[RMDB]
RNA sequence: GGGAACGACUCGAGUAGAGUCGAAAAAAAGAUAUGGACUUAAUGGAGCCUGCUGUCCUUGGACCGCUUAUCGGAAACGAUAAGCGCUAGGAUCUAAGCAGGCGAUGAAAUUAAGUCCUAAGUCAAACUAAGACAAAUUCUUCGGAAUUUGUCUUAGAAAAGAAACAACAACAACAAC
Reactivity to 2A3 in 0.01 (KOAc 150mM, MgCl2 10mM, bicine 150mM(pH8.5), 24C), signal-to-noise 1, nucleotides 027 to 126: a000a020a040g080a040u100a050u190g000g000a000c000u000u000a020a020u020g000g010a010g030c000c010u000g000c020u000g000u040c000c000u030u070g120g080a240c130c050g000c020u010u000a010u000c010g030g030a110a020a060c000g000a010u000a010a010g030c000g000c000u010a010g000g010a010u020c040u280a110a000g000c010a000g000g000c020g020a020u020g000a010a020a000u000u000a010a000g010u010c000c000u000a100a010g000u000c050a060a030a120
Reactivity to DMS in 0.01 (KOAc 150mM, MgCl2 10mM, bicine 150mM(pH8.5), 24C), signal-to-noise 3, nucleotides 027 to 126: a040a060a080g000a060u000a300u000g000g000a010c000u000u000a010a010u010g020g000a060g010c000c000u010g010c000u000g010u000c000c000u000u010g040g000a140c300c040g010c000u000u000a010u000c010g000g000a170a080a180c000g020a000u000a000a010g000c000g000c010u000a010g000g000a020u010c260u020a150a030g020c010a010g000g000c010g000a020u020g030a080a080a020u000u000a010a020g020u000c000c000u000a020a070g010u000c010a100a140a220